[RMDB]
RNA sequence: GGGAACGACUCGAGUAGAGUCGAAAAUGAGGAAUGUUCGCAUUCCUCAACUGGAAAACCCGCCGAAAGGCAUUUUAUUCCUUGGCUGGCGAAAGCCUAAAAAAGCUUAAUCCUUCGGGAUUAAGAAAUACUGUGACAUAUUCGUAUGUCACAGUAUAAAAGAAACAACAACAACAAC
Reactivity to 2A3 in 0.01 (KOAc 150mM, MgCl2 10mM, bicine 150mM(pH8.5), 24C), signal-to-noise 3, nucleotides 027 to 126: u070g000a010g000g010a010a010u010g000u060u080c180g020c090a010u000u000c010c000u000c000a010a030c020u040g030g010a010a050a040a070c000c020c020g000c010c000g100a150a070a010g010g000c010a010u010u080u020u160a110u090u030c010c000u020u040g030g000c020u010g020g000c060g070a110a020a030g010c010c020u070a070a050a000a010a000a010g020c000u000u000a000a000u020c000c000u020u050c220g110g000g000a000u000u010a000a010g000a000a030
Reactivity to DMS in 0.01 (KOAc 150mM, MgCl2 10mM, bicine 150mM(pH8.5), 24C), signal-to-noise 5, nucleotides 027 to 126: u010g010a010g000g010a020a000u000g010u000u010c220g010c000a050u000u000c000c000u000c000a010a040c170u000g000g010a080a080a130a110c050c050c080g030c010c000g010a080a090a070g000g000c220a060u000u000u000u000a140u010u000c010c010u000u000g000g010c040u010g000g000c060g000a080a080a100g010c000c000u000a000a020a050a060a060a110g010c000u000u000a000a000u000c000c000u000u020c180g030g000g000a010u000u000a000a000g000a080a050